Background: This 177-nucleotide RNA was probed chemically with DMS and 2A3. For DMS, 494 sequencing reads were counted. DMS adducts were read by reverse transcription with MarathonRT. The RNA was probed in 150 mM KOAc, 10 mM MgCl2 and 150 mM bicine (pH 8.5) at 24 C.

[RMDB]
RNA sequence: GGGAACGACUCGAGUAGAGUCGAAAAAGCCUUCCAAUUCCGGAUUGUAGUUCAUUCCAAAUAUUGUCAAGUUGACAACCAGGAAUAGCCACUACAAUCCACCCCUUGUCAACUUGACACAAAUAAACCUGAUUAUGGGAUUCGUCCCAUAAUCAGGAAAAGAAACAACAACAACAAC
Reactivity to DMS in 0.01 (KOAc 150mM, MgCl2 10mM, bicine 150mM(pH8.5), 24C), signal-to-noise 1, nucleotides 027 to 126: a040g010c040c000u010u000c040c020a070a160u000u000c190c060g070g020a000u000u000g020u000a000g010u000u010c110a210u010u000c040c010a170a110a180u050a070u000u010g000u000c020a010a040g000u000u000g000a010c000a030a060c200c120a130g010g000a040a020u000a070g050c250c130a090c100u000a030c030a010a020u000c000c000a200c040c000c010c030u000u000g040u000c000a020a020c010u010u010g000a000c040a050c250a050a020a110u000a060a070a150
Reactivity to 2A3 in 0.01 (KOAc 150mM, MgCl2 10mM, bicine 150mM(pH8.5), 24C), signal-to-noise 2, nucleotides 027 to 126: a000g070c030c000u020u100c040c040a150a130u290u050c140c140g010g000a010u000u020g000u010a010g010u010u130c040a080u150u030c010c010a070a130a070u300a180u080u140g000u000c010a010a060g170u050u030g060a010c010a050a070c080c050a080g010g060a080a000u000a080g070c070c060a030c020u020a020c030a000a000u010c000c040a020c010c000c010c040u020u030g030u020c010a050a040c080u050u100g000a010c020a010c000a000a090a000u130a100a090a040